[RMDB]
RNA sequence: GGGAACGACUCGAGUAGAGUCGAAAAACACCGUGCAAAAAGCACGGAAGAGUCGUGCAAAGGACAGGCUCGACAGAUGCACGACAAAGCGAGCCAUGAAAAGACAGCGGGAAAACCGCUGUCGAAACGACAUGUUCCACUUCGGUGGAGCAUGUCGAAAAGAAACAACAACAACAAC
Reactivity to DMS in 0.01 (KOAc 150mM, MgCl2 10mM, bicine 150mM(pH8.5), 24C), signal-to-noise 4, nucleotides 027 to 126: a090c140a130c000c000g000u000g010c010a090a070a090a150a080g000c010a010c010g000g000a020a050g010a260g030u000c000g000u000g020c020a020a100a140g000g010a100c230a090g000g000c000u000c010g010a150c130a060g000a190u000g000c000a020c000g000a030c010a080a040a090g000c060g000a020g020c000c000a150u030g000a090a070a100a100g020a010c010a000g000c000g010g020g000a100a050a080a110c000c010g020c010u020g010u000c000g010a010a060a110
Reactivity to 2A3 in 0.01 (KOAc 150mM, MgCl2 10mM, bicine 150mM(pH8.5), 24C), signal-to-noise 5, nucleotides 027 to 126: a000c020a030c010c000g000u000g000c020a100a180a110a080a070g000c000a000c000g000g020a030a020g060a010g000u010c010g000u010g000c030a100a090a120g140g040a070c050a080g010g020c010u010c010g030a030c040a070g110a040u030g000c000a010c010g040a010c060a040a020a010g070c010g010a000g000c000c010a060u120g080a040a070a000a010g010a000c000a000g000c000g000g000g030a010a130a040a100c000c000g000c000u000g000u000c000g000a000a000a000
Chemical mapping of a 177-nucleotide RNA with DMS and 2A3.